Chemical mapping of a 207-nucleotide RNA with 2A3. Values cover nucleotides 27 to 156. For 2A3, 681 sequencing reads were counted.
RNA sequence: GGGAACGACUCGAGUAGAGUCGAAAACGGUGCCGGACAUAGACUUAUCGGACACCAGACGUUGACCAUCGCGCAGGUCAGCAAUCAUGUCCAUCAGGGUGACGCCGCUGGCAGUCCAGUCGGUAGUCAUGGUCAGCGCUGCAUCACGGCCGAAGUCAGAUAGUGGAUGCUUCGGCAUCCACUAUCUAAAAGAAACAACAACAACAAC
Reactivity to 2A3 in 0.01 (KOAc 150mM, MgCl2 10mM, bicine 150mM(pH8.5), 24C), signal-to-noise 1, nucleotides 027 to 156: c000g010g020u040g030c080c010g060g010a030c030a040u200a080g030a030c040u090u010a060u160c020g000g000a040c000a000c000c000a040g050a050c040g010u000u060g010a000c000c010a100u080c080g000c030g020c260a040g060g000u030c000a000g000c000a000a120u180c060a090u060g010u030c010c030a050u030c040a060g000g170g000u020g000a000c000g000c010c000g000c000u020g060g000c070a060g080u110c020c050a030g300u300c060g000g030u080a110g000u050c030a050u050g020g000u070c040a050g010c070g010c070u100g060c000a060u050c060a030c060g020g000c000c000g070a110a030g060u100c000